[RMDB]
RNA sequence: GGGAACGACUCGAGUAGAGUCGAAAAGAAAGAAAGAAAGUUCAUUGUUUAUCGGAAACUUUAAACUAUAACCAUUCAAACUUUGCCAGAAGUUAGUUUGAAUAGAAAUUAAAAAGAAACUUCUGAAUAACCUUAUCAUGCUUCGGCAUGAUAAGAACACAGUUGUUUAGUUCGCUAAACAACUGUGAAAAGAAACAACAACAACAAC
Reactivity to 2A3 in 0.01 (KOAc 150mM, MgCl2 10mM, bicine 150mM(pH8.5), 24C), signal-to-noise 1, nucleotides 027 to 156: g030a020a030a020g040a030a050a010g090a020a170a000g030u050u080c050a060u140u120g080u070u140u180a110u200c050g050g040a070a020a000c000u020u090u130a050a050a000c020u030a020u120a300a040c000c000a000u000u000c000a000a010a010c000u000u020u080g080c080c000a000g000a000a010g020u010u040a000g000u000u000u000g000a000a000u100a180g040a000a120a020u150u270a070a040a010a000a000g030a000a010a010c010u000u000c000u000g050a010a010u080a030a000c000c000u000u000a000u000c000a000u000g000c000u030u010c130g060g000c000a000u000g000a000u000a000a000g000a020a000